[RMDB]
RNA sequence: GGGAACGACUCGAGUAGAGUCGAAAAAGUCUGAUUAUCGCAUUAAAUUCAGCAUGAUAUUACAUGAUUUAAUGUGAUAUCAGUGCGAUAUCUAGCAGGACCGAGACGUAAAUACCUGCGUCUUCAAGAUAAUGUUAUAUUUCGAUAUGACAUUAUCAAAAGAAACAACAACAACAAC
Reactivity to 2A3 in 0.01 (KOAc 150mM, MgCl2 10mM, bicine 150mM(pH8.5), 24C), signal-to-noise 9, nucleotides 027 to 126: a000g060u020c010u010g010a030u040u180a010u020c000g000c000a000u010u080a070a060a070u270u160c080a070g080c040a100u050g050a030u060a050u120u110a050c030a030u030g050a150u120u060u190a070a010u010g000u000g000a000u000a000u000c000a000g010u020g010c010g010a010u010a050u100c090u090a030g040c030a040g030g060a030c020c050g030a020g010a020c020g020u040a020a130a070u150a140c020c030u010g000c000g000u000c000u060u050c070a090a010
Reactivity to DMS in 0.01 (KOAc 150mM, MgCl2 10mM, bicine 150mM(pH8.5), 24C), signal-to-noise 9, nucleotides 027 to 126: a100g010u020c010u010g000a040u010u020a000u000c000g000c000a010u000u020a040a060a090u040u040c210a120g030c190a110u010g000a090u020a030u010u020a050c030a030u000g010a150u030u030u030a050a010u000g010u000g010a000u000a000u000c000a010g010u010g000c010g010a040u010a030u010c070u020a070g010c060a100g010g010a110c100c100g000a030g000a020c030g010u000a020a050a080u020a100c110c050u000g000c020g000u000c010u000u010c200a100a120

Annotation: This 177-nucleotide RNA was probed chemically with 2A3 and DMS. Source: RMDB library OK1LIB, as collected in RNAgym. DMS adducts were read by reverse transcription with MarathonRT.